Chemical mapping of a 207-nucleotide RNA with DMS and 2A3. For 2A3, 4,791 sequencing reads were counted. The DMS profile rests on 4,610 reads. The data come from the RNA Mapping Database (RMDB), library M2RFOK. The reactions ran in a buffer of 150 mM KOAc, 10 mM MgCl2 and 150 mM bicine (pH 8.5), at 24 C.
[RMDB]
RNA sequence: GGGAACGACUCGAGUAGAGUCGAAAAACCGCAUCUACGGAUGCAGAACUACGUUCAUCCAAUUUAUUUGGACGCAUGAAAUGAGAAUAGGGAACGGGAUUCUCAUACGCAGGCUACGGCCUGCGAAAAAACUCCUUAUGCUUCGGCAUAAGGAGAACCAACGAUAUAAGUUCGCUUAUAUCGUUGGAAAAGAAACAACAACAACAAC
Reactivity to DMS in 0.01 (KOAc 150mM, MgCl2 10mM, bicine 150mM(pH8.5), 24C), signal-to-noise 2, nucleotides 027 to 156: a100c030c000g020c020a030u000c040u000a110c250g080g010a040u010g000c030a070g010a080a080c040u000a000c010g020u000u000c000a090u000c070c140a130a110u000u000u000a130u010u000u000g000g010a020c020g000c040a070u020g010a060a200a110u000g010a110g000a080a080u000a120g010g010g000a040a070c050g010g000g000a300u000u000c000u000c000a060u000a110c010g010c000a020g000g000c020u000a080c290g050g040c000c000u000g000c000g030a000a010a050a040a020a030c010u000c000c010u010u000a030u000g010c000u000u010c300g030g020c010a010u000a000a000g000g030a030g020a030a020
Reactivity to 2A3 in 0.01 (KOAc 150mM, MgCl2 10mM, bicine 150mM(pH8.5), 24C), signal-to-noise 5, nucleotides 027 to 156: a000c010c010g000c000a000u000c010u030a060c220g130g000a000u010g000c040a020g100a110a090c160u200a040c040g000u000u010c000a010u000c000c010a030a020u100u200u130a160u160u080u080g000g000a010c000g000c030a040u180g100a150a160a070u010g000a020g010a010a010u020a030g050g020g010a010a000c010g010g000g000a010u000u000c000u000c010a010u030a030c020g000c000a000g000g010c000u020a100c260g100g000c000c010u000g010c000g000a010a000a000a000a000a000c000u000c000c000u000u000a000u000g000c000u030u050c150g110g000c000a000u000a000a000g000g000a000g000a000a000